RNA sequence: GGGAACGACUCGAGUAGAGUCGAAAAGAUAUGGAGACCCUACUUUUGACGCACAAGACUCGGAAACGAGUCUCGUGCGAUAAGUAGCUCCUAAGUCAAAACCCAAAUCAGUUCGCUGAUUUGGGAACGUAGCUUAUUGCUUCGGCAAUAAGCUACGAAAAGAAACAACAACAACAAC
Reactivity to DMS in 0.01 (KOAc 150mM, MgCl2 10mM, bicine 150mM(pH8.5), 24C), signal-to-noise 1, nucleotides 027 to 126: g010a010u000a300u000g000g000a020g000a230c180c300c020u000a000c000u000u000u000u000g060a170c070g000c000a010c000a010a000g000a020c020u010c000g000g010a070a080a200c000g020a020g000u000c000u000c040g010u000g030c000g010a000u000a000a000g010u010a010g000c000u000c000c010u000a060a130g000u000c010a110a090a080a180c010c000c000a030a020a000u000c000a010g000u000u020c220g010c000u010g020a020u000u000u010g010g000g000a010a000
Reactivity to 2A3 in 0.01 (KOAc 150mM, MgCl2 10mM, bicine 150mM(pH8.5), 24C), signal-to-noise 1, nucleotides 027 to 126: g010a000u030a060u140g000g020a030g020a050c140c060c000u000a010c000u100u120u060u150g300a100c040g000c000a010c020a010a010g000a010c000u030c050g040g010a020a080a060c000g000a010g000u000c030u010c000g000u000g020c000g000a000u000a020a010g000u010a000g000c020u000c000c000u030a220a010g020u040c020a000a080a160a300c000c020c000a000a000a000u010c000a000g090u080u180c250g000c260u030g020a000u000u010u000g020g000g000a020a010
Description
The data come from the RNA Mapping Database (RMDB), library TTRDEL. This 177-nucleotide RNA was probed chemically with DMS and 2A3. For DMS, 985 sequencing reads were counted. The RNA was probed in 150 mM KOAc, 10 mM MgCl2 and 150 mM bicine (pH 8.5) at 24 C. The 2A3 profile rests on 1,699 reads.